RNA sequence: GGGAACGACUCGAGUAGAGUCGAAAAAGUAGAAGUACCUGUUGAAGAUAUUGCGCAGGUUGUCAUAGCUGACACCUUACAGGAAACUCCUGUUGUGCCUGAUACUGUUGAAGUCCCACCGCAAGUGAAACGGGCUUGUUCGCAAGCCCGAAAAGAAACAACAACAACAAC
Reactivity to DMS in 0.01 (KOAc 150mM, MgCl2 10mM, bicine 150mM(pH8.5), 24C), signal-to-noise 4, nucleotides 027 to 129: a010g020u030a030g000a050a020g000u000a000c030c010u000g020u000u020g020a180a010g010a170u050a100u000u000g030c140g040c110a010g010g050u010u060g050u000c010a000u060a180g040c180u010g010a020c060a060c000c050u010u000a050c000a060g020g040a120a110a050c060u040c020c040u010g010u000u000g030u000g010c020c040u010g010a080u000a020c040u060g020u070u010g010a020a020g020u010c010c000c040a000c060c000g050c100a060a030g030u000g020a040a060a060
Reactivity to 2A3 in 0.01 (KOAc 150mM, MgCl2 10mM, bicine 150mM(pH8.5), 24C), signal-to-noise 2, nucleotides 027 to 129: a000g090u060a030g010a160a000g000u000a030c000c000u000g040u060u090g030a040a070g030a090u030a060u080u300g130c120g010c000a020g070g020u040u120g010u000c000a050u050a030g040c050u040g020a010c000a020c000c070u000u070a000c000a010g050g010a090a090a000c080u050c030c000u010g000u010u020g000u030g000c000c000u020g040a060u020a100c040u040g020u090u070g050a040a010g030u000c000c000c000a050c020c010g010c000a160a000g040u220g110a030a000a030